Description
Source: RMDB library 15KLIB, as collected in RNAgym. Structure probing data (2A3 and DMS) for a 170-nucleotide construct. The reactions ran in a buffer of 150 mM KOAc, 10 mM MgCl2 and 150 mM bicine (pH 8.5), at 24 C. For DMS the reverse transcriptase was MarathonRT. 2A3 adducts were read by reverse transcription with SuperScript II with manganese.
RNA sequence: GGGAACGACUCGAGUAGAGUCGAAAAUGAACGUCAUCGGCAAUUAGUCGAACACACCACCCCCUGGUUGCUGCUCUCAGGCACACCAAAUGAAAAAUUGGUGACAACCUCCACGGCGCCUGAUUUUACCCCGCGUACUUCGGUACGCGGAAAAGAAACAACAACAACAAC
Reactivity to 2A3 in 0.01 (KOAc 150mM, MgCl2 10mM, bicine 150mM(pH8.5), 24C), signal-to-noise 2, nucleotides 027 to 129: u210g030a170a000c060g020u000c020a030u000c020g000g000c080a000a030u140u020a060g060u010c030g070a180a010c020a000c000a020c030c000a010c000c000c000c000c000u000g020g020u060u000g000c080u060g000c000u060c010u040c140a170g050g000c090a000c000a000c000c000a030a040a040u210g090a050a030a000a000a010u020u010g010g000u010g020a070c030a060a040c000c010u010c000c000a030c010g020g000c000g070c000c000u040g180a190u000u030u030u070a140c020c020
Reactivity to DMS in 0.01 (KOAc 150mM, MgCl2 10mM, bicine 150mM(pH8.5), 24C), signal-to-noise 2, nucleotides 027 to 129: u040g010a150a130c140g010u020c040a020u000c020g000g000c030a260a080u050u010a230g030u000c080g030a130a120c130a190c120a100c000c000a110c000c000c030c070c050u030g020g020u020u000g070c020u020g030c160u030c080u000c090a110g010g110c020a150c010a040c060c000a000a010a140u030g070a030a000a030a110a300u000u000g000g040u030g000a060c270a080a140c010c060u010c000c100a080c030g000g100c050g000c000c030u010g000a000u000u000u000u070a140c000c070